An RNA of 177 nucleotides, treated with DMS and 2A3 and read out base by base.
For 2A3 the reverse transcriptase was SuperScript II with manganese.
The RNA was probed in 150 mM KOAc, 10 mM MgCl2 and 150 mM bicine (pH 8.5) at 24 C.
The 2A3 profile rests on 1,164 reads.
[RMDB]
RNA sequence: GGGAACGACUCGAGUAGAGUCGAAAAUAGAAGUCCCGAUAAAUGGGCGCCGGCGGAGCGGAGGGAGAUCCGAGCGGCGGCGGCAAGCUGGCUGCGAGCGGCUGAGCAGCACUCCAAGCUCGAACAACAACUCACAAUCUUUCGAGAUUGUGAGUUGAAAAGAAACAACAACAACAAC
Reactivity to DMS in 0.01 (KOAc 150mM, MgCl2 10mM, bicine 150mM(pH8.5), 24C), signal-to-noise 2, nucleotides 027 to 126: u020a160g000a120a110g000u000c000c000c020g060a130u000a030a100a130u000g030g010g010c000g010c020c030g040g000c050g010g000a160g000c030g010g000a070g000g000g000a180g000a100u000c050c010g010a040g010c000g010g010c070g010g010c040g000g000c040a030a070g020c020u000g000g000c010u000g020c050g010a110g020c050g000g020c040u010g000a050g000c020a080g000c030a120c040u000c010c010a110a130g000c040u000c040g010a100a070c190a130a110
Reactivity to 2A3 in 0.01 (KOAc 150mM, MgCl2 10mM, bicine 150mM(pH8.5), 24C), signal-to-noise 1, nucleotides 027 to 126: u210a000g160a200a000g060u010c010c000c040g010a000u070a180a180a110u150g010g020g000c030g000c010c020g070g110c040g000g050a190g110c030g010g040a030g040g040g020a120g010a110u000c020c020g000a030g020c020g070g020c000g010g010c000g000g000c010a010a000g050c050u030g040g000c000u030g010c040g000a020g030c010g000g000c010u010g000a030g030c040a000g020c030a030c030u000c020c020a030a020g000c030u010c030g030a070a010c040a030a030